Description: Structure probing data (2A3 and DMS) for a 177-nucleotide construct. Values cover nucleotides 27 to 126. The data come from the RNA Mapping Database (RMDB), library OK1LIB. For DMS the reverse transcriptase was MarathonRT.
[RMDB]
RNA sequence: GGGAACGACUCGAGUAGAGUCGAAAACAUAACAAGGUAGGAUCUCUACAAUACUUGGCACUAGCAGCAUUAAUAACACCAAAAAAGAUAAAGCCACCUUUGCCUAGUGUUACGAAACUGACAGAGGCUCAGAGCUAGUAUUCGUACUAGCUCUGAGAAAAGAAACAACAACAACAAC
Reactivity to 2A3 in 0.01 (KOAc 150mM, MgCl2 10mM, bicine 150mM(pH8.5), 24C), signal-to-noise 6, nucleotides 027 to 126: c030a030u240a100a010c040a060a010g070g020u060a050g020g170a240u060c070u000c010u130a020c030a060a080u070a080c030u040u040g050g000c020a020c050u020a070g010c060a010g050c010a040u110u090a140a190u150a040a070c040a060c010c060a070a070a060a050a030a000g140a100u270a090a060a000g050c010c000a010c000c010u000u020u030g010c000c000u040a050g070u050g060u070u010a030c090g060a100a090a010c000u000g010a000c020a040g110a020g060g000
Reactivity to DMS in 0.01 (KOAc 150mM, MgCl2 10mM, bicine 150mM(pH8.5), 24C), signal-to-noise 3, nucleotides 027 to 126: c070a090u060a120a090c140a060a050g040g010u000a070g000g000a120u010c050u020c020u000a020c070a120a130u020a110c060u000u000g010g030c020a050c050u010a070g000c010a040g000c070a030u010u000a040a080u040a050a020c080a090c030c030a000a020a040a040a080a020g000a130u030a110a080a140g000c000c030a070c020c010u010u010u000g010c040c020u010a030g030u000g000u000u000a080c140g020a100a030a070c050u000g000a070c070a070g000a070g000g000
For 2A3 the reverse transcriptase was SuperScript II with manganese.